This 177-nucleotide RNA was probed chemically with DMS and 2A3. 2A3 adducts were read by reverse transcription with SuperScript II with manganese. The DMS profile rests on 5,776 reads. It was measured as part of the RMDB library OK2TRN.
RNA sequence: GGGAACGACUCGAGUAGAGUCGAAAAAGAUGUAAAGCAGAAUCUAGUUGGAAACCUAUUGCGUUAUUCAUGAAACAUCAAAAUAUUCCUUUUGUGCACUUUCUAAUAACGAUGAAAACCUGGUUGAUGCCUCUAAUAUUUUCGAAUAUUAGAGGCAAAAAGAAACAACAACAACAAC
Reactivity to DMS in 0.01 (KOAc 150mM, MgCl2 10mM, bicine 150mM(pH8.5), 24C), signal-to-noise 6, nucleotides 027 to 126: a050g000a060u010g000u000a080a100a110g010c070a090g000a100a050u000c070u000a100g020u010u010g010g010a090a070a070c040c030u000a090u000u010g000c020g020u000u000a020u000u000c190a050u010g000a050a040a030c050a070u010c010a020a020a050a040u010a140u000u010c110c060u000u000u000u000g020u000g000c160a100c200u000u010u000c020u000a020a010u000a010a010c030g010a050u010g000a100a050a080a110c120c110u010g000g010u010u010g000a170
Reactivity to 2A3 in 0.01 (KOAc 150mM, MgCl2 10mM, bicine 150mM(pH8.5), 24C), signal-to-noise 1, nucleotides 027 to 126: a000g080a030u080g040u240a030a120a000g120c010a010g090a110a050u020c030u140a060g050u060u130g090g040a020a020a070c000c000u070a110u070u200g000c000g020u000u040a040u050u030c050a020u140g020a040a020a020c000a000u120c040a130a000a000a000u250a070u080u170c030c050u110u110u000u050g080u040g030c140a100c250u070u000u030c010u010a000a050u020a010a010c010g020a020u040g120a010a000a080a080c000c000u010g070g020u010u020g020a040